[RMDB]
RNA sequence: GGGAACGACUCGAGUAGAGUCGAAAACACCUCGCGGUCCACGACCUGCCUGACGUUGUUCACCACCGUAUGCAGGGCCUCGCGGUUGGUGAUGAUGGUCUCCAGCCGCCCCAUGGCCGUGGGGACCAGUACGCGCGAUGUUCGCAUCGCGCGUACUAAAAGAAACAACAACAACAAC
Reactivity to 2A3 in 0.01 (KOAc 150mM, MgCl2 10mM, bicine 150mM(pH8.5), 24C), signal-to-noise 1, nucleotides 027 to 126: c050a000c000c000u000c000g000c010g020g000u120c090c060a040c130g040a010c010c030u030g030c000c020u080g050a030c050g000u050u080g050u160u300c050a160c170c000a000c050c000g000u010a020u050g000c010a040g000g040g030c030c030u160c070g000c000g020g000u010u040g000g030u010g000a000u020g020a070u250g100g020u000c000u000c000c000a010g020c000c010g000c020c000c000c020a060u100g000g000c010c010g000u020g060g000g000g000a000c010c010

Source information: The data come from the RNA Mapping Database (RMDB), library OK1LIB. Chemical mapping of a 177-nucleotide RNA with 2A3. For 2A3 the reverse transcriptase was SuperScript II with manganese.